[RMDB]
RNA sequence: GGGAACGACUCGAGUAGAGUCGAAAACGGCAUUGAUAGGCGGCGAAAUCGGCACCAACCGCGUUGGCCGCUGCUUGUUCAUAAACGGUAUUGCCGAAAGCCUGAUCGGUGACGACCAAUCUCAUUAGUGCACGCUACGAUUCGUCGUAGCGUGCACAAAAGAAACAACAACAACAAC
Reactivity to DMS in 0.01 (KOAc 150mM, MgCl2 10mM, bicine 150mM(pH8.5), 24C), signal-to-noise 1, nucleotides 027 to 126: c010g000g010c000a010u000u020g000a020u000a040g000g020c010g000g010c140g000a070a050a080u020c020g030g010c020a100c300c110a120a100c000c060g010c110g010u010u000g000g000c020c040g020c080u010g010c030u010u010g000u010u030c130a030u000a180a070a090c070g000g020u000a090u010u000g000c000c000g040a040a090a210g000c010c020u000g010a030u000c030g020g030u000g000a050c060g010a090c050c070a050a110u010c070u000c030a070u000u000a100
Reactivity to 2A3 in 0.01 (KOAc 150mM, MgCl2 10mM, bicine 150mM(pH8.5), 24C), signal-to-noise 1, nucleotides 027 to 126: c000g020g000c010a020u000u050g050a000u060a100g060g030c000g000g040c040g060a120a020a010u070c000g020g000c040a010c070c040a020a040c000c010g030c110g040u010u050g020g000c010c000g000c050u030g030c000u000u150g010u110u090c120a070u160a110a100a000c000g050g000u040a050u040u070g040c000c000g000a020a000a000g000c050c000u080g090a100u020c030g040g000u030g020a040c040g110a050c000c070a080a140u040c020u020c030a120u110u210a050